RNA sequence: GGGAACGACUCGAGUAGAGUCGAAAAUCAGUUCACUUCGGUGAACUGAAAAAUGGCAGCUAUGAGCUAAAGUGUGAUAGCAAAAGAUCGAAAGAUCAAAAAAAACCAUGGACUUCGGUCCAUGGAACACUGUUACAAACUUCGGUUUGUAACAGUGAAAAGAAACAACAACAACAAC
Reactivity to 2A3 in 0.01 (KOAc 150mM, MgCl2 10mM, bicine 150mM(pH8.5), 24C), signal-to-noise 2, nucleotides 027 to 126: u010c010a010g000u000u000c000a000c000u020u070c150g100g010u000g000a000a000c000u000g010a030a000a000a010a000u080g020g010c000a000g000c010u030a020u040g090a040g040c010u180a260a110a170g230u220g010u040g150a010u010a010g000c010a040a030a040a130g000a010u020c010g000a050a030a020g000a020u000c000a010a000a040a020a000a000a010a040c000c000a000u000g010g000a010c000u020u020c210g090g000u000c000c000a000u000g000g010a010a000
Reactivity to DMS in 0.01 (KOAc 150mM, MgCl2 10mM, bicine 150mM(pH8.5), 24C), signal-to-noise 2, nucleotides 027 to 126: u000c000a010g000u000u010c000a010c000u000u020c190g000g010u010g010a020a010c000u000g000a000a010a030a100a120u000g010g010c000a160g000c020u000a010u000g000a060g000c020u000a050a060a190g020u010g010u010g010a050u000a020g010c030a090a080a100a070g000a010u000c000g010a100a080a210g010a000u000c000a000a000a010a060a070a050a130a100c000c020a000u000g000g000a010c000u010u010c250g040g010u000c000c000a000u020g000g010a030a100